Structure probing data (2A3 and DMS) for a 207-nucleotide construct. The reactions ran in a buffer of 150 mM KOAc, 10 mM MgCl2 and 150 mM bicine (pH 8.5), at 24 C. DMS adducts were read by reverse transcription with MarathonRT. For 2A3, 2,663 sequencing reads were counted.

[RMDB]
RNA sequence: GGGAACGACUCGAGUAGAGUCGAAAACUCAAUCACUACGGUGAUUGAGAAUGCUUACGCCUCAAUGAAGCUUGACUCGAGUGCCUCCAGCAGAUAUAGACUGAAACAUUUAGUAUGGUCAAGCAGGGAGCAACAGCUCGAGUACGCUCGAGCUGAACUGCUGACCAUAUUUCGAUAUGGUCAGCAGAAAAGAAACAACAACAACAAC
Reactivity to 2A3 in 0.01 (KOAc 150mM, MgCl2 10mM, bicine 150mM(pH8.5), 24C), signal-to-noise 4, nucleotides 027 to 156: c000u000c000a010a000u000c000a000c010u030a010c240g130g000u010g000a000u000u000g000a000g000a010a040u080g000c020u050u060a070c060g060c030c020u080c050a070a230u190g100a120a050g020c000u010u030g010a010c010u010c050g020a000g030u020g010c010c040u060c070c010a020g000c020a000g140a050u170a050u110a220g100a150c030u050g020a030a080a020c040a020u070u100u040a040g020u060a120u190g040g000u000c000a010a000g000c000a000g040g030g000a060g040c020a030a060c000a030g000c010u010c000g020a010g020u030a020c210g020c010u000c000g000a000g000c000u020g010a030a010
Reactivity to DMS in 0.01 (KOAc 150mM, MgCl2 10mM, bicine 150mM(pH8.5), 24C), signal-to-noise 2, nucleotides 027 to 156: c020u010c010a020a000u000c010a010c010u000a120c300g070g000u000g000a000u000u000g000a050g010a040a070u000g010c040u000u010a100c140g010c040c030u010c070a080a120u000g000a130a170g030c000u010u000g000a050c010u010c030g000a060g020u000g020c050c040u010c030c010a090g050c020a100g010a220u010a180u010a150g010a160c040u000g000a100a070a050c010a050u000u000u000a050g050u000a080u000g030g020u000c020a030a040g010c040a180g000g040g010a090g010c030a100a110c020a040g010c000u000c000g000a060g050u000a050c300g060c000u000c000g020a010g000c010u010g010a010a200